The data come from the RNA Mapping Database (RMDB), library TTRINS. Structure probing data (2A3 and DMS) for a 177-nucleotide construct.
RNA sequence: GGGAACGACUCGAGUAGAGUCGAAAAGAUAUGGAGAUGGUAGCCUUGGAUUUAUAAUCACAGCGACCUAGGUCGGAAACGACCUAGGUCGUCACAGUUAUUGUCAGGCUGAGAGUCUCCUAAGUCACAAUUACAUAUCCUUCGGGAUAUGUAAUUGAAAAGAAACAACAACAACAAC
Reactivity to 2A3 in 0.01 (KOAc 150mM, MgCl2 10mM, bicine 150mM(pH8.5), 24C), signal-to-noise 4, nucleotides 027 to 126: g010a000u040a020u140g000g010a030g000a020u140g070g210u210a000g000c030c000u020u130g090g000a040u030u300u210a300u250a160a000u110c030a030c010a260g000c000g000a000c000c010u000a010g000g010u000c000g000g000a030a050a010c020g000a000c000c010u000a000g000g000u000c000g000u000c000a000c000a000g110u180u250a190u280u120g040u040c070a000g010g000c020u010g050a190g010a030g100u010c010u000c000c000u020a120a020g030u020c010a000
Reactivity to DMS in 0.01 (KOAc 150mM, MgCl2 10mM, bicine 150mM(pH8.5), 24C), signal-to-noise 4, nucleotides 027 to 126: g000a010u000a090u010g000g000a020g020a020u000g010g010u000a010g010c000c010u000u000g010g010a030u000u000u010a100u010a100a050u000c040a130c110a100g010c010g010a010c000c010u000a000g010g010u000c000g010g000a020a020a060c000g020a020c000c000u000a000g000g010u000c000g010u000c020a030c090a090g000u000u000a090u010u000g010u000c060a010g000g010c010u000g000a150g000a260g000u000c000u000c000c000u010a000a090g000u000c020a300